About this RNA: Source: RMDB library OK1LIB, as collected in RNAgym. Structure probing data (2A3) for a 177-nucleotide construct. Values cover nucleotides 27 to 126. The RNA was probed in 150 mM KOAc, 10 mM MgCl2 and 150 mM bicine (pH 8.5) at 24 C. Values are in units of 0.01, from 0 to 300, in steps of 10.

RNA sequence: GGGAACGACUCGAGUAGAGUCGAAAAUUAAUUGGCGCAGUCGGUAGGAUCCAAUAAAAUAAAAGAGUCCUUUUAGUACGGUACUGAUCAACUGAAGGAUAUGCUAUACGACUAGCUAUCCAAGAUCGAUCGGCAGGGUAUUCGUACCCUGCCGAUCAAAAGAAACAACAACAACAAC
Reactivity to 2A3 in 0.01 (KOAc 150mM, MgCl2 10mM, bicine 150mM(pH8.5), 24C), signal-to-noise 1, nucleotides 027 to 126: u140u110a050a010u070u000g040g000c140g000c090a010g000u000c000g030g140u080a040g040g000a000u000c000c000a050a000u120a060a040a000a000u300a120a150a150a060g010a080g000u000c010c000u050u040u070u120a070g000u070a010c090g020g250u160a230c000u010g000a120u000c120a060a160c000u010g050a080a040g000g000a010u000a000u300g080c000u010a150u080a190c000g000a000c070u000a000g000c000u000a000u000c000c000a000a000g010a010u170c030